RNA sequence: GGGAACGACUCGAGUAGAGUCGAAAACUUGUCUAGUAGGUGGAUUUCGUCGGGGAAAGCCUGUUGGAGCGGACGUUGAUAUGGUGUUGAGUCCAUCACAUACUCAUUCUACAAAACAUCUGGUGGAUGUUCUCUUAAGAAUUUUAGACGAGGAAUACGUAAUGAGUGCUUUCGAGCACUCAUUACGAAAAGAAACAACAACAACAAC
Reactivity to 2A3 in 0.01 (KOAc 150mM, MgCl2 10mM, bicine 150mM(pH8.5), 24C), signal-to-noise 2, nucleotides 027 to 156: c040u080u090g020u020c030u020a030g070u040a030g130g070u050g010g070a080u000u200u010c040g000u050c070g030g000g010g010a050a040a110g000c030c020u050g040u050u080g020g000a010g040c030g010g010a000c060g020u030u060g010a050u010a050u250g040g000u030g060u140u040g010a000g040u020c030c000a080u040c020a030c000a080u160a030c030u050c090a020u200u050c020u080a080c020a100a210a060a000c030a060u020c050u130g080g000u000g040g020a010u030g040u000u010c020u010c000u070u030a110a140g030a120a040u050u050u090u180a060g010a020c010g030a000g010g030a070a110u260a070
Reactivity to DMS in 0.01 (KOAc 150mM, MgCl2 10mM, bicine 150mM(pH8.5), 24C), signal-to-noise 1, nucleotides 027 to 156: c040u010u010g030u000c020u010a060g000u010a060g040g020u010g050g010a150u000u000u010c040g050u020c020g060g090g010g010a080a050a110g010c020c010u000g000u010u000g020g030a130g060c050g060g030a060c060g010u000u000g020a120u000a120u010g020g010u000g040u000u000g010a120g010u010c020c040a090u010c040a040c040a160u000a070c050u000c080a090u000u000c050u000a200c070a090a030a080a070c040a060u000c010u000g030g050u020g030g010a090u000g010u000u000c010u020c000u030u000a080a120g000a060a020u000u000u000u000a050g000a010c010g000a070g000g000a060a060u000a090